The record gives the reactivity of an RNA of 207 nucleotides to 2A3. Values cover nucleotides 27 to 156. As a SHAPE reagent, 2A3 marks flexible, mostly unpaired nucleotides at the ribose 2'-OH. 2A3 adducts were read by reverse transcription with SuperScript II with manganese.

[RMDB]
RNA sequence: GGGAACGACUCGAGUAGAGUCGAAAAGAGACAGUCAACAACACAAAAGCAUGAGAUGCUCUGCAGCAACAGUUCUCCAGGGCUGAGAUCAAGUCCUGUCUCCUCUCUAAUCCAACGCCCGUCAUUCGCACUGACAGAAGUGAACCUUCAGAAUCCACCCGCCAAAAUUAUUCGUAAUUUUGGCGGGAAAAGAAACAACAACAACAAC
Reactivity to 2A3 in 0.01 (KOAc 150mM, MgCl2 10mM, bicine 150mM(pH8.5), 24C), signal-to-noise 2, nucleotides 027 to 156: g030a010g010a000c010a020g040u060c000a020a060c020a110a030c060a120c030a100a100a110a030g090c100a080u090g060a040g010a090u110g040c010u000c000u050g010c050a020g020c010a020a140c010a110g020u140u000c010u060c030c010a000g020g030g000c020u050g030a050g000a090u070c020a000a090g000u070c000c020u020g030u000c000u000c000c000u010c000u050c000u040a100a090u080c030c010a030a040c030g000c000c010c000g050u080c010a080u120u080c030g000c030a030c050u020g020a040c030a100g030a050a010g060u080g060a020a060c020c000u050u090c030a030g190a070a050u270c050c250a000